RNA sequence: GGGAACGACUCGAGUAGAGUCGAAAAUUGACAAUGUCAAAUAAAAGAGUUCUUGAAGCAUUUGAAACAUCUGUAACAUGCAUUUUUCCAUUAGUUAGUUUUCAGAUUAAUCAGCUAUCAAUGGUGCCGUUAUGAACUGAUUCGUCAGUUCAUAACGAAAAGAAACAACAACAACAAC
Reactivity to 2A3 in 0.01 (KOAc 150mM, MgCl2 10mM, bicine 150mM(pH8.5), 24C), signal-to-noise 5, nucleotides 027 to 126: u060u030g010a020c060a190a230u200g000u040c010a030a030a040u160a060a110a040a030g100a010g050u070u070c030u060u110g080a080a010g020c010a060u060u050u220g090a090a070a010c010a060u030c020u110g040u050a030a030c010a060u050g020c020a080u090u040u050u230u000c010c010a020u010u040a040g030u010u020a010g010u030u020u050u210c060a010g010a090u000u060a040a090u090c040a000g030c020u040a040u150c010a010a060u050g020g010u050g070c030
Reactivity to DMS in 0.01 (KOAc 150mM, MgCl2 10mM, bicine 150mM(pH8.5), 24C), signal-to-noise 5, nucleotides 027 to 126: u010u000g010a030c020a120a170u010g020u000c020a040a060a080u010a070a090a110a140g000a200g000u000u000c040u000u010g010a100a130g010c020a040u000u010u010g010a080a090a070c090a040u000c070u010g000u000a040a080c040a060u000g020c060a130u010u010u010u010u010c050c040a060u000u000a070g010u000u000a060g010u000u000u010u000c120a080g010a100u010u010a060a120u010c100a080g010c020u000a050u000c020a020a030u000g020g010u000g020c150
The record gives the reactivity of an RNA of 177 nucleotides to 2A3 and DMS. 2A3 adducts were read by reverse transcription with SuperScript II with manganese. Reactivities are given for positions 27 through 126. The RNA was probed in 150 mM KOAc, 10 mM MgCl2 and 150 mM bicine (pH 8.5) at 24 C.